[RMDB]
RNA sequence: GGGAACGACUCGAGUAGAGUCGAAAACACCUGUCGUGGGAUUACAUGCUGGAUUACAUGACCAUGGCGCUGUGGCGGGCGCUCCUGAGGAGGAGGAGGGCUUGCAUUUACUUGCCGGUGCAGCCUCAGCGAGGUCUGGAGCGAGUGGAGGAAGAGGCACGUUAUACGCGUUCGCGCGUAUAACGUGAAAAGAAACAACAACAACAAC
Reactivity to 2A3 in 0.01 (KOAc 150mM, MgCl2 10mM, bicine 150mM(pH8.5), 24C), signal-to-noise 2, nucleotides 027 to 156: c040a040c010c020u020g030u050c020g030u030g040g030g040a120u170u180a080c070a100u060g000c010u110g100g060a140u130u130a090c020a060u110g020a040c030c000a070u050g020g030c010g020c040u020g000u050g040g000c000g010g040g000c080g010c050u030c000c010u070g060a110g030g000a020g010g030a010g020g010a030g020g050g000c000u010u060g010c040a000u010u040u010a140c190u090u120g040c030c020g010g010u080g000c020a010g010c010c000u000c020a020g050c020g040a010g000g020u010c020u030g000g000a000g010c010g030a020g050u050g010g030a040g000g010a040a030g000a040g010g040